Source information:
Chemical mapping of a 177-nucleotide RNA with 2A3 and DMS. The reactions ran in a buffer of 150 mM KOAc, 10 mM MgCl2 and 150 mM bicine (pH 8.5), at 24 C. The 2A3 profile rests on 3,102 reads. For DMS, 1,420 sequencing reads were counted. It was measured as part of the RMDB library M2PK50.
[RMDB]
RNA sequence: GGGAACGACUCGAGUAGAGUCGAAAAGAAGGUGUGUUCGCACACCUUCAAAUAGGUCAGACAAAAGCAUCCUGGAGUCAAGACCUGAAAACCAAAGGAGCAAAACCACCUACUUCGGUAGGUGGAAGGCAAACUUAAAGUUCGCUUUAAGUUUGCCAAAAGAAACAACAACAACAAC
Reactivity to 2A3 in 0.01 (KOAc 150mM, MgCl2 10mM, bicine 150mM(pH8.5), 24C), signal-to-noise 2, nucleotides 027 to 126: g000a020a010g000g000u020g000u000g010u060u120c170g060c050a000c000a000c010c000u000u010c000a000a020a010u070a000g020g000u000c000a010g000a060c010a050a100a010a000g030c010a110u090c040c020u010g040g020a040g050u020c060a160a040g020a000c010c000u000g010a060a090a000a020c020c010a080a040a010g040g020a030g030c010a000a010a030a140c000c010a000c000c000u010a020c020u030u070c240g070g000u000a000g030g000u000g000g000a000a010
Reactivity to DMS in 0.01 (KOAc 150mM, MgCl2 10mM, bicine 150mM(pH8.5), 24C), signal-to-noise 2, nucleotides 027 to 126: g000a010a000g000g040u020g020u000g010u010u000c170g030c020a030c010a000c000c000u000u000c000a020a020a040u000a090g010g010u030c010a120g000a020c010a040a120a130a100g010c040a060u000c070c000u000g000g070a300g020u000c010a060a110g000a020c000c000u000g000a070a070a080a200c000c030a040a040a050g010g000a120g050c060a050a050a050a210c010c000a010c000c000u000a000c000u000u000c240g020g000u020a000g000g010u000g000g000a000a010